[RMDB]
An RNA of 177 nucleotides, treated with 2A3 and DMS and read out base by base.
Conditions: 150 mM KOAc, 10 mM MgCl2 and 150 mM bicine (pH 8.5), 24 C.
Values cover nucleotides 27 to 126.
For 2A3 the reverse transcriptase was SuperScript II with manganese.
For DMS the reverse transcriptase was MarathonRT.

RNA sequence: GGGAACGACUCGAGUAGAGUCGAAAAUCACCCUCGGCGCCCAGGGCGCCCUGCUGGUAGGCGAGGGGCGGGUCGAGCAUUUCCCGGUGGCGCGGGUCAAGGCGCUGGAUACCACGGCGGCCGGCGAUGAUUAGUAAAUAUUCGUAUUUACUAAUCAAAAAGAAACAACAACAACAAC
Reactivity to 2A3 in 0.01 (KOAc 150mM, MgCl2 10mM, bicine 150mM(pH8.5), 24C), signal-to-noise 4, nucleotides 027 to 126: u070c030a120c000c010c000u020c020g130g050c030g020c020c020c020a090g070g110g030c060g070c020c000c000u040g000c020u060g030g120u100a090g020g060c050g070a050g000g020g020g000c030g030g010g000u050c040g030a020g030c040a070u050u060u060c000c000c000g020g020u060g030g000c040g000c030g030g010g020u060c060a060a050g050g000c020g000c020u020g020g040a040u060a130c010c040a020c020g040g000c000g030g050c020c020g010g010c010g030a060
Reactivity to DMS in 0.01 (KOAc 150mM, MgCl2 10mM, bicine 150mM(pH8.5), 24C), signal-to-noise 9, nucleotides 027 to 126: u000c110a170c020c010c010u000c080g010g010c010g020c050c010c090a090g020g010g020c070g010c050c000c020u000g010c060u000g000g010u010a080g020g010c020g010a100g000g000g010g010c040g010g010g010u000c040g000a100g010c080a130u000u000u000c020c010c010g010g020u000g000g010c040g020c050g010g000g010u010c070a070a130g000g010c030g020c020u000g000g000a130u000a090c100c070a100c060g000g010c030g010g010c020c020g000g010c080g010a120